[RMDB]
RNA sequence: GGGAACGACUCGAGUAGAGUCGAAAACGGGCGUAGAUGUGGAGACACAUUGAGCGCGCUGUUCGCUGCGCCUAGGUGUUAUCCCUAGGGUGUUAGGCAGUGGAACUGUGACAGCCGUAAGGGAUGACCCCGUUUGUAGCUUCGGCUGCGAACGGGGAAAAGAAACAACAACAACAAC
Reactivity to DMS in 0.01 (KOAc 150mM, MgCl2 10mM, bicine 150mM(pH8.5), 24C), signal-to-noise 1, nucleotides 027 to 126: c050g000g000g020c020g000u000a290g000a000u040g000u020g000g000a300g000a300c000a000c000a000u000u000g020a130g020c050g020c060g010c080u010g020u000u050c000g000c000u000g010c050g000c000c030u000a010g000g010u000g020u030u040a020u020c100c000c000u020a060g020g000g020u010g020u000u010a070g000g000c010a010g010u000g000g000a260a300c060u000g020u000g010a050c040a020g000c010c010g030u030a020a030g000g000g000a030u010g000a150
Reactivity to 2A3 in 0.01 (KOAc 150mM, MgCl2 10mM, bicine 150mM(pH8.5), 24C), signal-to-noise 2, nucleotides 027 to 126: c030g040g030g000c040g000u020a020g000a130u000g030u000g010g100a110g160a260c000a010c000a000u030u140g020a200g050c080g000c000g000c020u110g060u110u060c040g000c000u000g000c000g070c010c020u030a030g000g030u100g050u170u140a070u060c000c000c000u000a000g000g000g010u050g060u100u090a050g000g020c000a010g000u030g110g070a060a200c000u000g000u010g050a020c020a050g040c030c000g030u110a090a160g060g010g020a010u050g070a120
Structure probing data (DMS and 2A3) for a 177-nucleotide construct. The reactions ran in a buffer of 150 mM KOAc, 10 mM MgCl2 and 150 mM bicine (pH 8.5), at 24 C. It was measured as part of the RMDB library OK1LIB. For 2A3 the reverse transcriptase was SuperScript II with manganese.